[RMDB]
RNA sequence: GGGAACGACUCGAGUAGAGUCGAAAAGCAUCUUGCUUCGGCAAGAUGCAAAUAACGGUCAGUGCUUGCAGCUAGUCCUAAAUGCUAACUGGCCUUACGCUAAAACGAAUGCGUUCGCGCAUUCGAAGGUAUCACAUCGGUUCGCCGAUGUGAUACCAAAAGAAACAACAACAACAAC
Reactivity to DMS in 0.01 (KOAc 150mM, MgCl2 10mM, bicine 150mM(pH8.5), 24C), signal-to-noise 1, nucleotides 027 to 126: g000c000a000u000c020u000u010g010c000u000u000c270g040g020c040a000a020g010a000u050g000c010a010a040a000u020a060a050c230g020g060u000c000a020g020u000g010c210u000u000g010c100a020g010c040u010a110g020u000c030c020u010a010a030a080u000g000c010u020a060a010c000u000g030g020c020c020u000u000a070c300g010c220u000a040a070a150a110c010g000a030a000u000g010c000g000u010u000c220g020c010g010c020a000u020u000c000g020a050a030
Reactivity to 2A3 in 0.01 (KOAc 150mM, MgCl2 10mM, bicine 150mM(pH8.5), 24C), signal-to-noise 2, nucleotides 027 to 126: g000c000a000u030c000u000u010g020c010u060u040c130g050g010c000a020a000g020a010u000g000c000a000a000a000u030a040a010c010g020g010u000c010a000g000u010g080c100u170u250g020c050a010g040c000u080a030g010u020c000c000u040a080a080a070u180g000c020u020a050a040c010u010g000g020c000c010u000u080a090c100g020c080u160a110a070a000a040c020g000a010a010u000g030c010g010u020u020c290g000c000g000c030a000u020u000c000g010a020a000